[RMDB]
RNA sequence: GGGAACGACUCGAGUAGAGUCGAAAAUAGUGACAAUAGAUUUACAUCCCAGGCACAAUCACACUGCAGCUACGUGGCUGCCUUUGCAGAACCGAGUCACACAUUUUUUUCUUUCUCCUUUCUAAGUUCUGAUUGGCUGGUUCGCCAGCCAAUCAGAAAAAGAAACAACAACAACAAC
Reactivity to 2A3 in 0.01 (KOAc 150mM, MgCl2 10mM, bicine 150mM(pH8.5), 24C), signal-to-noise 1, nucleotides 027 to 126: u040a000g020u000g030a020c030a000a080u090a070g060a060u090u010u080a000c000a020u070c000c000c010a000g000g060c000a010c050a060a160u100c000a010c000a000c030u050g080c000a010g000c000u080a050c060g080u160g050g010c000u010g030c000c000u050u160u090g010c030a040g060a060a010c000c050g030a000g090u000c000a000c000a000c000a020u130u030u000u000u000u000u000c050u050u100u000c060u070c010c020u010u060u060c030u000a040a170g040u000